[RMDB]
RNA sequence: GGGAACGACUCGAGUAGAGUCGAAAAACGAGGUACGCCUCGAAAAUAUGACCGGUGUCAUAGCCUCUAGCACACAGAGGUCGCGUGGGUCCAACUCCCCCCCUUUUCCGAGGGUAUCGGAAACCAAAAAACACAAUUUGGUUCGCCAAAUUGUGAAGUUUGAUGGUCAGUUCGCUGACCAUCAAACAAAAGAAACAACAACAACAAC
Reactivity to 2A3 in 0.01 (KOAc 150mM, MgCl2 10mM, bicine 150mM(pH8.5), 24C), signal-to-noise 2, nucleotides 027 to 156: a010c000g000a000g010g000u020a000c100g100c000c010u020c010g060a120a020a020a070u130a110u120g020a010c070c000g120g010u150g070u150c020a060u030a050g010c020c000u000c000u040a110g050c070a010c000a010c020a140g020a050g040g020u050c000g000c030g030u070g140g000g000u030c040c050a020a210c080u050c020c000c000c000c010c000c010u000u000u000u000c000c000g000a000g000g000g030u080a000u000c000g000g000a000a000a000c010c020a050a010a090a040a110a000c010a000c000a000a000u010u000u000g010g000u020u020c030g010c050c000a000a010a000u000u010g000u000g000a010a000
Structure probing data (2A3) for a 207-nucleotide construct. It was measured as part of the RMDB library M2RFPK. For 2A3, 1,045 sequencing reads were counted.